RNA sequence: GGGAACGACUCGAGUAGAGUCGAAAAAUGCAUCAAUUGGUAAAGUUUCAUUUACUGAUGAACAAUUAAUUGAAAACUUCAAUACUUUACAAGAUGUAUUAGCUAAAGCUAAACCAUCAUCUGCUAAGCGCGUAGCUCAAUUCGUUGAGCUACGCGCAAAAGAAACAACAACAACAAC
Reactivity to 2A3 in 0.01 (KOAc 150mM, MgCl2 10mM, bicine 150mM(pH8.5), 24C), signal-to-noise 1, nucleotides 027 to 126: a030u030g010c060a000u000c000a050a300u030u100g220g000u000a000a000a000g040u220u080u000c120a030u000u080u300a300c170u220g000a000u040g000a050a000c080a030a040u300u300a110a000u080u080g040a140a000a000a000c000u030u020c030a050a000u000a110c000u000u000u000a000c000a090a010g000a000u030g000u000a030u060u000a000g020c010u180a220a150a170g000c000u000a050a120a000c000c000a030u090c050a000u020c070u070g030c040u100a020a020